RNA sequence: GGGAACGACUCGAGUAGAGUCGAAAAGGAACUAUGUUCAGGCAUGAAGCCUCCACGUGCGUGCGAAAGCACCCGGAAACGGCUGAGCAUAGUUCCGAGCUGAAGGAGGCACGGCUCAAAAUAAAAACGCCCUAGUAUUAUUCGUAAUACUAGGGCGAAAAGAAACAACAACAACAAC
Reactivity to DMS in 0.01 (KOAc 150mM, MgCl2 10mM, bicine 150mM(pH8.5), 24C), signal-to-noise 2, nucleotides 027 to 126: g000g000a030a000c000u000a000u000g010u000u000c020a010g060g000c000a010u000g000a160a120g010c010c000u000c000c000a300c010g040u000g000c010g040u000g010c000g000a120a110a120g000c000a030c000c000c010g020g030a070a130a150c030g000g000c000u000g000a030g000c010a000u000a000g000u000u020c000c000g000a000g000c000u000g000a140a140g000g020a010g020g000c000a300c000g000g000c000u000c000a160a090a100a070u040a050a060a110a050a130
Reactivity to 2A3 in 0.01 (KOAc 150mM, MgCl2 10mM, bicine 150mM(pH8.5), 24C), signal-to-noise 4, nucleotides 027 to 126: g000g000a000a000c000u000a000u000g000u010u000c000a000g000g000c010a010u010g030a120a030g010c000c000u000c000c000a050c000g010u010g000c000g000u000g000c000g050a120a030a040g010c000a000c000c010c000g010g000a020a060a030c010g000g010c000u000g000a000g000c000a000u000a000g000u000u000c000c010g000a000g010c010u020g020a140a070g000g010a000g010g000c030a020c010g010g000c000u000c000a060a080a010a020u260a020a080a030a010a010